Structure probing data (DMS and 2A3) for a 177-nucleotide construct.
RNA sequence: GGGAACGACUCGAGUAGAGUCGAAAAGACAUCACUAACAAUCCGAUACGCACUGUUAACGUCACUGGAACGGGUGAUUUGUGCAUUAGCAAAGACAAAAGGAGGUUGUAUGAAACAAUCCCGAUGACGUUAAAGGGAUGUUCGCAUCCCUUUAACGAAAAGAAACAACAACAACAAC
Reactivity to DMS in 0.01 (KOAc 150mM, MgCl2 10mM, bicine 150mM(pH8.5), 24C), signal-to-noise 6, nucleotides 027 to 126: g000a120c110a040u000c040a040c090u000a080a060c080a070a120u000c040c030g010a140u010a090c170g000c050a070c060u010g010u000u010a090a060c130g010u000c040a070c080u020g010g020a120a080c170g020g010g020u010g000a060u000u000u000g030u000g010c050a070u000u020a070g010c060a030a060a090g000a100c110a030a060a080a120g000g000a070g010g010u010u000g030u000a070u010g010a090a070a050c130a070a090u010c000c000c000g010a170u010g010a170
Reactivity to 2A3 in 0.01 (KOAc 150mM, MgCl2 10mM, bicine 150mM(pH8.5), 24C), signal-to-noise 4, nucleotides 027 to 126: g040a000c000a040u050c050a020c090u090a150a000c030a070a110u040c030c020g060a050u070a150c050g000c010a030c030u060g070u220u100a130a010c060g020u020c020a020c100u100g050g180a170a080c100g120g000g000u030g010a040u110u020u120g040u010g000c000a010u100u000a040g030c030a120a100a040g120a140c050a030a190a000a060g060g030a050g040g000u010u020g020u070a070u100g090a090a000a010c030a050a060u000c020c000c000g030a110u140g060a020
The RNA was probed in 150 mM KOAc, 10 mM MgCl2 and 150 mM bicine (pH 8.5) at 24 C.
2A3 adducts were read by reverse transcription with SuperScript II with manganese.
It was measured as part of the RMDB library OK2TRN.
Reactivities are given for positions 27 through 126.
For DMS, 5,743 sequencing reads were counted.